[RMDB]
RNA sequence: GGGAACGACUCGAGUAGAGUCGAAAACACUUUGCCGGCUCAGGUACUUAGUGACUCUCAAUGCUUUCGACAUCUUGAGAGUCUCUCUGUGCCUGCACUGGCGGUGGAAAAGCCGAGUUCGCUCGGCGUUUCUCCUAGUGUUCGCACUAGGAGAAACAAAAGAAACAACAACAACAAC
Reactivity to 2A3 in 0.01 (KOAc 150mM, MgCl2 10mM, bicine 150mM(pH8.5), 24C), signal-to-noise 6, nucleotides 027 to 126: c010a010c010u170u170u280g000c000c000g030g030c050u000c020a010g000g010u030a000c000u010u010a000g000u000g020a010c000u000c000u000c000a010a020u060g010c060u120u240u300c140g160a200c050a060u060c060u110u060g000a000g000a000g010u000c000u000c000u000c010u000g000u010g000c000c010u000g010c010a000c000u000g010g000c010g010g010u020g000g010a080a170a010a000g000c010c000g000a010g000u040u150c180g030c090u000c000g010g010c010
Reactivity to DMS in 0.01 (KOAc 150mM, MgCl2 10mM, bicine 150mM(pH8.5), 24C), signal-to-noise 4, nucleotides 027 to 126: c000a010c010u000u010u020g030c000c000g020g000c140u000c010a010g010g010u010a000c000u000u000a010g000u000g000a010c010u000c000u000c000a020a010u000g010c070u000u010u010c250g010a170c060a020u000c080u000u000g000a020g010a020g020u000c000u000c010u000c010u000g000u000g000c000c000u000g010c130a030c000u000g010g020c010g000g010u000g000g000a060a060a090a160g010c000c000g000a020g010u000u010c200g010c000u000c000g020g010c000
The record gives the reactivity of an RNA of 177 nucleotides to 2A3 and DMS. The reactions ran in a buffer of 150 mM KOAc, 10 mM MgCl2 and 150 mM bicine (pH 8.5), at 24 C. The DMS profile rests on 7,422 reads. For DMS the reverse transcriptase was MarathonRT.